[RMDB]
RNA sequence: GGGAACGACUCGAGUAGAGUCGAAAAGAUAUGGACCGUUGGACGCUUUUGACGACUGUUCCGUCGGAAACGACGGGUAGGUCGAUAAGCGUCCACCGGUCCUAAGUCAAAGUUCGGUUCGCCGAACCUGUUCUUUGGGGUUCGCCCCAAAGAACAGAAAAGAAACAACAACAACAAC
Reactivity to DMS in 0.01 (KOAc 150mM, MgCl2 10mM, bicine 150mM(pH8.5), 24C), signal-to-noise 2, nucleotides 027 to 126: g000a010u010a300u000g000g000a000c000c000g000u010u000g010g010a030c000g040c000u000u000u010u020g070a300c110g000a010c010u000g010u020u040c030c000g030u000c010g010g000a160a130a220c010g000a030c000g000g000g010u000a220g000g010u000c000g040a160u000a000a010g010c000g010u000c000c000a000c050c000g000g000u000c000c000u010a000a070g000u010c030a090a120a190g000u000u010c000g000g000u000u020c250g020c030c000g000a000a020c010
Reactivity to 2A3 in 0.01 (KOAc 150mM, MgCl2 10mM, bicine 150mM(pH8.5), 24C), signal-to-noise 1, nucleotides 027 to 126: g020a000u130a030u170g010g000a000c000c010g000u010u030g000g000a000c010g030c000u070u150u140u230g220a150c060g020a000c000u040g110u300u140c030c010g020u010c050g040g030a120a060a040c050g000a030c030g020g000g060u080a060g060g000u030c000g000a000u020a000a000g000c000g000u010c000c000a010c000c000g000g020u000c010c020u000a010a020g020u020c080a030a040a050g000u030u010c040g090g030u040u140c300g050c090c020g000a010a030c010